RNA sequence: GGGAACGACUCGAGUAGAGUCGAAAAAGACGCUUGCGGAAGCCUUAGCAGCCCACAAGGGUUCCCCUCGCGACUAUAUUUAAAGGAAGGGGAUUGAAUGCUAGUGCCUGAGCUGCCAACUUGGGUGCGACAUCGCCAAAUUGCGGAGAACUCCACACGUUAAAGCAAUCUUCGGAUUGCUUUAACGAAAAGAAACAACAACAACAAC
Reactivity to 2A3 in 0.01 (KOAc 150mM, MgCl2 10mM, bicine 150mM(pH8.5), 24C), signal-to-noise 1, nucleotides 027 to 156: a000g070a000c060g000c010u040u030g010c020g050g040a040a050g050c000c030u020u050a000g000c000a000g000c020c000c000a170c130a230a260g000g000g000u000u000c000c010c030c000u010c040g030c010g040a020c110u030a030u080a120u300u170u160a110a130a000g040g040a020a000g000g000g010g010a000u010u040g010a020a000u010g000c010u030a000g020u000g020c010c020u030g000a010g000c000u050g070c060c000a050a000c020u040u030g070g000g000u000g000c010g030a010c010a090u030c020g040c030c000a050a110a160u130u100g000c010g000g030a060g030a050a060c020u020c000c010a030c020a010